About this RNA
An RNA of 177 nucleotides, treated with 2A3 and DMS and read out base by base. For DMS, 1,482 sequencing reads were counted. The RNA was probed in 150 mM KOAc, 10 mM MgCl2 and 150 mM bicine (pH 8.5) at 24 C.
RNA sequence: GGGAACGACUCGAGUAGAGUCGAAAAGAUAUGGAUGCUUGGUCAGCAGCAACAGCCACGCUCGGAAACGAGCGUGGACAUGCUGUUCAAAGCAUCCUAAGUCAAAACAUGUCCUUCGGGACAUGAAGAGCGUACAGUAGUUCGCUACUGUACGCUCAAAAGAAACAACAACAACAAC
Reactivity to 2A3 in 0.01 (KOAc 150mM, MgCl2 10mM, bicine 150mM(pH8.5), 24C), signal-to-noise 1, nucleotides 027 to 126: g030a030u030a030u180g000g020a030u010g000c010u020u030g050g090u250c150a000g000c010a000g020c040a050a110c040a190g020c000c000a000c000g010c000u040c010g000g000a090a090a060c000g020a000g030c020g000u010g000g030a000c000a000u020g000c000u000g040u070u070c000a030a020a020g000c000a000u030c000c000u000a040a010g040u000c030a010a010a080a160c000a010u000g000u000c020c000u030u030c300g060g000g000a000c030a000u020g000a050a060
Reactivity to DMS in 0.01 (KOAc 150mM, MgCl2 10mM, bicine 150mM(pH8.5), 24C), signal-to-noise 2, nucleotides 027 to 126: g000a030u030a300u000g030g010a000u000g000c020u000u030g030g010u000c200a020g030c000a050g040c130a070a100c300a170g030c000c010a000c000g000c000u010c000g030g000a070a130a200c030g000a020g030c030g050u000g000g000a020c090a120u000g010c000u000g000u000u000c030a290a050a090g000c010a000u000c000c000u000a030a080g010u010c080a060a070a120a170c030a020u000g000u010c000c030u000u000c200g020g000g000a000c020a000u000g000a150a110
Description
For 2A3, 4,307 sequencing reads were counted. Source: RMDB library TTRDES, as collected in RNAgym.